The data come from the RNA Mapping Database (RMDB), library OK1LIB. An RNA of 177 nucleotides, treated with DMS and 2A3 and read out base by base.
RNA sequence: GGGAACGACUCGAGUAGAGUCGAAAAUGCUUGCCGGACCAUGUGGUUCAGGGUCGGGUCAUAGGCUGAAUGCACCGACAAAGGUGGUAUCAAUAUAGCUUAGCUGUGUUGGUCCUGAACCCGGCAAGGCUCGUUACACGUUCGCGUGUAGCGAGCCAAAAGAAACAACAACAACAAC
Reactivity to DMS in 0.01 (KOAc 150mM, MgCl2 10mM, bicine 150mM(pH8.5), 24C), signal-to-noise 2, nucleotides 027 to 126: u070g020c050u010u000g000c020c000g000g000a080c070c060a080u020g020u010g000g000u000u000c010a020g010g000g000u000c010g000g000g040u000c070a100u000a070g000g020c020u020g000a090a030u020g020c040a010c000c000g000a130c300a070a130a160g000g000u010g010g010u030a050u000c030a090a030u020a030u030a020g020c030u020u010a090g000c050u000g020u040g000u010u010g000g010u000c030c000u030g000a000a010c000c000c050g000g000c000a020a010
Reactivity to 2A3 in 0.01 (KOAc 150mM, MgCl2 10mM, bicine 150mM(pH8.5), 24C), signal-to-noise 5, nucleotides 027 to 126: u160g020c020u010u000g010c000c010g020g010a080c060c050a210u200g090u140g150g000u010u010c000a000g000g000g010u010c040g050g000g030u090c030a060u010a050g050g000c010u020g050a060a020u100g010c010a000c000c000g180a180c170a070a150a020g020g000u030g030g050u110a030u080c070a070a020u090a030u070a250g010c000u100u050a010g000c030u000g040u000g060u130u160g010g000u010c000c000u000g000a000a000c010c000c020g000g000c010a010a020
2A3 adducts were read by reverse transcription with SuperScript II with manganese.